[RMDB]
RNA sequence: GGGAACGACUCGAGUAGAGUCGAAAAAAAGUGGAUAUAAGACAGAGCCCUGACAGCCAAAAGUUAGGGGAAUUAGACCAAUAAAUGGCUCAAUUACUAUCAUAUCUGAGUAAAGACUAAAGUGCAUGAUUUAAAGUAGAGUUCAGAGAACAGUGAAGAUUAUGAGUGAUUUCGAUCACUCAUAAUCAAAAGAAACAACAACAACAAC
Reactivity to 2A3 in 0.01 (KOAc 150mM, MgCl2 10mM, bicine 150mM(pH8.5), 24C), signal-to-noise 3, nucleotides 027 to 156: a000a000a010g050u060g000g030a020u040a000u030a170a010g020a030c060a020g080a070g060c000c000c020u000g020a010c020a020g200c110c100a090a140a010a020g030u050u060a040g000g000g010g020a000a010u070u050a040g020a030c030c000a030a020u150a150a120a080u110g020g000c020u020c030a020a070u090u040a070c030u140a020u150c020a050u040a030u110c030u040g020a010g040u140a060a100a060g050a050c060u070a160a040a010g050u040g060c020a030u030g030a110u140u100u150a060a090a020g030u040a040g010a000g020u020u040c010a010g010a000g030a110a010c010a030g080u100g060a090a060
Reactivity to DMS in 0.01 (KOAc 150mM, MgCl2 10mM, bicine 150mM(pH8.5), 24C), signal-to-noise 2, nucleotides 027 to 156: a030a040a030g020u010g020g000a080u000a100u000a070a100g030a120c050a170g000a200g040c020c010c020u000g030a080c000a140g000c050c140a070a090a100a150g000u010u010a060g020g020g040g000a090a060u000u000a080g020a040c000c030a040a170u030a060a060a120u020g020g000c010u010c030a060a070u020u020a070c030u000a080u010c070a100u000a030u000c010u000g030a200g010u010a050a050a050g010a130c040u010a020a020a070g040u010g030c040a100u010g010a080u000u020u000a020a050a070g030u010a080g030a090g000u010u010c010a090g000a120g020a040a020c060a100g030u010g000a070a120
The record gives the reactivity of an RNA of 207 nucleotides to 2A3 and DMS. Conditions: 150 mM KOAc, 10 mM MgCl2 and 150 mM bicine (pH 8.5), 24 C. Values cover nucleotides 27 to 156. For DMS, 3,045 sequencing reads were counted. 2A3 adducts were read by reverse transcription with SuperScript II with manganese. For 2A3, 1,705 sequencing reads were counted. DMS adducts were read by reverse transcription with MarathonRT.